Overview: Chemical mapping of a 177-nucleotide RNA with 2A3 and DMS. For DMS, 1,337 sequencing reads were counted. The reactions ran in a buffer of 150 mM KOAc, 10 mM MgCl2 and 150 mM bicine (pH 8.5), at 24 C. Reactivities are given for positions 27 through 126.

RNA sequence: GGGAACGACUCGAGUAGAGUCGAAAAACUCCGAACUUGCUAGAAUCGAAGAUACCAGGUGCUAGGGCGUAGGGAUAAGCUUUACGCCCGUGACGGAAACAACCGAGACUAAUGUUAAGGUCUCUAACAUUCUCGGCUACUUCGGUAGCCGAGAAUGAAAAGAAACAACAACAACAAC
Reactivity to 2A3 in 0.01 (KOAc 150mM, MgCl2 10mM, bicine 150mM(pH8.5), 24C), signal-to-noise 2, nucleotides 027 to 126: a010c070u060c000c000g030a060a050c010u000u160g060c050u140a060g050a070a010u120c030g060a080a000g080a080u150a150c010c060a080g080g000u030g040c040u040a010g080g000g000c000g000u010a000g000g000g110a110u020a200a100g200c000u000u040u000a000c000g000c050c000c000g000u000g000a030c010g010g030a020a130a050c070a040a060c000c000g000a000g040a000c070u160a100a090u120g090u220u090a130a000g000g080u000c010u010c010u000a120a060
Reactivity to DMS in 0.01 (KOAc 150mM, MgCl2 10mM, bicine 150mM(pH8.5), 24C), signal-to-noise 2, nucleotides 027 to 126: a110c010u000c060c060g050a010a100c110u040u090g030c010u010a040g010a040a220u010c030g000a050a040g000a040u000a110c000c000a090g020g110u050g040c000u070a150g000g000g020c000g000u000a000g000g000g000a300u050a160a300g010c000u000u020u000a000c000g000c000c000c000g000u030g000a140c030g000g000a150a140a110c150a030a210c130c010g000a060g000a020c030u010a010a150u070g060u000u000a110a090g000g000u030c050u010c000u000a040a160